[RMDB]
RNA sequence: GGGAACGACUCGAGUAGAGUCGAAAACCCGUUUUGUUCGCAAAACGGGACUCAUCUUUGCUUGGCAGCAUACCAGGUGUUGGCUGGACUGCUGGCUUAUCCUUGGAGGCAGUUUCGACUGCCUCAAGAAUCAUAUCCUUUUCGAAGGAUAUGAUUCAAAAGAAACAACAACAACAAC
Reactivity to 2A3 in 0.01 (KOAc 150mM, MgCl2 10mM, bicine 150mM(pH8.5), 24C), signal-to-noise 8, nucleotides 027 to 126: c000c000c000g010u010u000u000u010g020u020u050c190g000c090a010a000a000a010c000g000g000g040a050c020u040c090a220u060c080u060u130u100g030c040u070u210g050g000c010a010g000c010a050u060a190c010c000a020g030g050u150g130u300u130g210g070c000u000g000g010a040c000u000g000c010u000g020g000c010u040u100a130u130c020c020u030u090g170g000a010g000g000c000a000g000u020u040u160c150g060a030c010u010g010c000c000u000c000a000a000
Reactivity to DMS in 0.01 (KOAc 150mM, MgCl2 10mM, bicine 150mM(pH8.5), 24C), signal-to-noise 8, nucleotides 027 to 126: c000c000c000g010u000u000u000u010g010u010u010c200g020c010a000a000a010a010c010g010g000g000a090c100u000c130a100u000c100u000u010u000g010c020u000u010g020g010c010a020g010c120a150u000a240c010c010a020g000g010u010g010u000u010g010g000c020u000g000g000a140c040u000g000c010u000g000g000c010u000u000a060u000c050c040u000u010g010g010a020g010g010c000a010g010u000u000u010c180g000a030c000u000g000c000c000u000c000a020a040